[RMDB]
RNA sequence: GGGAACGACUCGAGUAGAGUCGAAAAUUGCUUUCUGCCAUAGGGGGGAAAGCAUCGCCUUCAGAAUUGGCUGCUCCGUUGGAACAUUUGAGGCCUACUGUAUCCGUGUCCUGACAACAUUCCCCGCGCACCGGCCAGUGUUCGCACUGGCCGGUGCAAAAGAAACAACAACAACAAC
Reactivity to 2A3 in 0.01 (KOAc 150mM, MgCl2 10mM, bicine 150mM(pH8.5), 24C), signal-to-noise 1, nucleotides 027 to 126: u190u000g000c000u000u000u070c000u090g300c000c030a150u300a300g070g000g000g000g000g030a000a000a000g000c000a090u000c010g110c000c000u180u150c130a200g010a300a020u030u040g000g010c000u100g000c000u000c090c000g000u020u080g000g010a000a080c100a210u000u000u200g000a000g010g010c050c000u030a130c040u020g000u070a030u110c030c010g020u000g000u000c000c090u050g000a050c050a000a080c000a080u000u210c000c000c000c020g040c000